Conditions: 150 mM KOAc, 10 mM MgCl2 and 150 mM bicine (pH 8.5), 24 C. Structure probing data (2A3) for a 207-nucleotide construct. Values are in units of 0.01, from 0 to 300, in steps of 10. Source: RMDB library VIROID, as collected in RNAgym.
RNA sequence: GGGAACGACUCGAGUAGAGUCGAAAAGCAAUGAGGUAAGGUGGGACUUUUCCUUCUGAGACCAAGCGGUUGGUCUCGAGGGGGGUGUGACCCAGGUACCGCCGUAGAAACUGGGUUACGACGUCUACCCGGGAUUCAAACCCGGUCCCCUCCAGAAGCUAUCCUGAAAGUUCGCUUUCAGGAUAGCAAAAGAAACAACAACAACAAC
Reactivity to 2A3 in 0.01 (KOAc 150mM, MgCl2 10mM, bicine 150mM(pH8.5), 24C), signal-to-noise 1, nucleotides 027 to 156: g010c000a050a120u070g030a000g050g030u120a010a040g080g030u120g040g000g020a030c010u160u100u030u110c000c000u070u080c080u140g000a000g010a000c000c000a010a010g080c030g050g080u080u030g000g000u020c010u010c030g020a060g010g030g010g030g070g020u080g000u000g010a010c000c000c000a000g030g000u030a030c040c000g030c000c020g070u060a050g030a060a300a040c020u050g000g020g040u000u000a010c040g010a020c050g020u040c060u000a020c010c010c000g000g000g000a110u300u290c160a030a070a230c010c000c000g000g040u080c000c000c000c000u020c020c020a050g020a110a000